This 207-nucleotide RNA was probed chemically with 2A3 and DMS. For 2A3, 4,683 sequencing reads were counted. For DMS, 9,790 sequencing reads were counted. DMS adducts were read by reverse transcription with MarathonRT.

[RMDB]
RNA sequence: GGGAACGACUCGAGUAGAGUCGAAAAUCCUAAGUCAAGGUGGGUUGCAAUGAUGGGUCGUUGUCAGAUACAUCGGAAACGAUGUAUCUUGGAUUUACGACCUUGAGCAACCUAAACCUUGAUAUGGAAAACUGGUCUAGGUUCGCCUAGACCAGAACAUGGUAAGAUUGUUCGCAAUCUUACCAUGAAAAGAAACAACAACAACAAC
Reactivity to 2A3 in 0.01 (KOAc 150mM, MgCl2 10mM, bicine 150mM(pH8.5), 24C), signal-to-noise 3, nucleotides 027 to 156: u030c010c000u040a120a020g020u000c000a010a000g020g020u020g000g030g000u010u010g000c050a250a300u090g040a060u080g050g010g000u000c000g020u000u010g010u000c000a000g000a000u000a000c000a010u000c000g030g000a100a050a040c000g010a000u000g000u000a000u010c010u010u080g030g000a020u180u110u160a000c000g000a010c000c010u000u000g000a020g000c010a000a000c000c010u010a020a010a000c000c000u000u000g000a000u010a060u030g050g010a040a160a020a050c000u000g000g000u000c000u000a000g050g000u040u050c260g100c030c000u000a000g000a000c000c000a000g000a000a000
Reactivity to DMS in 0.01 (KOAc 150mM, MgCl2 10mM, bicine 150mM(pH8.5), 24C), signal-to-noise 3, nucleotides 027 to 156: u010c000c010u000a060a260g060u000c010a020a020g050g110u010g010g010g040u000u000g000c010a130a110u010g010a110u000g020g030g020u010c000g050u010u000g010u000c010a040g000a020u000a010c000a030u000c000g010g000a190a130a300c020g020a020u010g020u000a000u000c000u000u010g020g000a040u000u000u000a020c010g000a010c000c010u000u000g000a090g010c000a020a010c000c000u000a010a050a050c000c010u000u000g010a030u000a130u000g010g010a080a090a130a130c010u000g010g020u000c000u010a000g000g000u000u000c300g000c020c010u000a000g010a030c010c000a010g010a020a170